Structure probing data (DMS and 2A3) for a 177-nucleotide construct.
Source: RMDB library OK1LIB, as collected in RNAgym.
The RNA was probed in 150 mM KOAc, 10 mM MgCl2 and 150 mM bicine (pH 8.5) at 24 C.
RNA sequence: GGGAACGACUCGAGUAGAGUCGAAAAGCUAUCGACCAGGCCGAAGUCCCACAUGUCGGUAACAUACGCGCUGUCAAGGGACACCUCGGUUACUUGUGGAACUCCUCGUGUUUGACUAAGCGCGACACAAUUCCGUGGCUUUCGAGCCACGGAAUUGAAAAGAAACAACAACAACAAC
Reactivity to DMS in 0.01 (KOAc 150mM, MgCl2 10mM, bicine 150mM(pH8.5), 24C), signal-to-noise 1, nucleotides 027 to 126: g000c000u000a130u000c070g000a000c060c120a040g160g000c000c030g050a070a080g000u030c000c000c000a110c300a120u100g000u010c020g080g000u060a050a070c120a090u000a280c060g060c020g030c010u000g000u000c000a100a080g000g000g150a050c150a020c010c020u060c060g000g090u000u000a010c110u000u000g020u000g000g020a080a130c210u000c050c020u050c300g000u000g000u000u000u000g000a040c000u000a000a050g000c020g000c020g060a120c120a080
Reactivity to 2A3 in 0.01 (KOAc 150mM, MgCl2 10mM, bicine 150mM(pH8.5), 24C), signal-to-noise 2, nucleotides 027 to 126: g070c030u050a030u180c020g060a070c040c030a050g110g000c000c000g020a050a030g090u030c000c050c000a050c020a020u140g010u090c000g000g080u070a120a000c000a040u230a110c060g000c000g030c020u000g000u020c010a070a050g000g000g000a020c040a090c050c020u030c040g010g040u030u080a040c000u050u060g010u070g020g040a070a050c000u020c040c000u020c040g120u080g060u030u050u060g010a000c050u050a110a000g040c020g000c000g020a010c030a000